[RMDB]
RNA sequence: GGGAACGACUCGAGUAGAGUCGAAAAUGAGAUGUUUUUUAUGACCAAAUAUGACCGUCAUCGUGAUGUUAUACUCACCCACCUGAAUGAUCUGGUUAACUGCACAGCCCCAUCGGUUGCAAUCGCGCGCUUAACACAUUCCGAUACUAAAGGGAGAACAGAGAUUAACCUUCGGGUUAAUCUCUGUAAAAGAAACAACAACAACAAC
Reactivity to DMS in 0.01 (KOAc 150mM, MgCl2 10mM, bicine 150mM(pH8.5), 24C), signal-to-noise 1, nucleotides 027 to 156: u000g000a090g020a130u010g000u020u020u000u060u020u000a110u040g000a280c000c010a080a080a190u000a090u010g030a050c010c030g000u000c030a090u000c040g010u000g010a090u010g030u000u010a110u030a140c080u000c050a050c070c020c040a030c030c020u040g010a080a070u010g030a050u000c030u020g030g020u010u010a030a060c080u000g110c050a060c050a110g010c030c000c010c040a080u030c060g060g000u010u030g010c010a110a180u000c080g020c060g030c030g060c050u000u000a020a090c040a060c090a180u000u000c010c030g040a100u000a160c090u000a030a090a140g000g000g020a090g010a140
Reactivity to 2A3 in 0.01 (KOAc 150mM, MgCl2 10mM, bicine 150mM(pH8.5), 24C), signal-to-noise 1, nucleotides 027 to 156: u080g000a020g040a080u050g070u070u000u000u010u020u050a110u070g070a040c000c000a000a050a050u280a070u070g040a070c040c020g010u000c050a040u070c110g050u030g010a070u060g050u050u020a040u040a060c020u000c040a060c000c000c000a000c000c020u110g160a160a150u070g050a060u030c020u060g000g010u060u050a060a060c030u090g010c050a090c040a160g070c040c000c000c000a000u050c000g030g010u060u110g000c040a060a160u110c000g000c000g010c000g030c160u080u090a060a010c010a000c000a100u150u080c000c020g040a030u040a130c050u120a110a060a000g030g000g000a040g020a020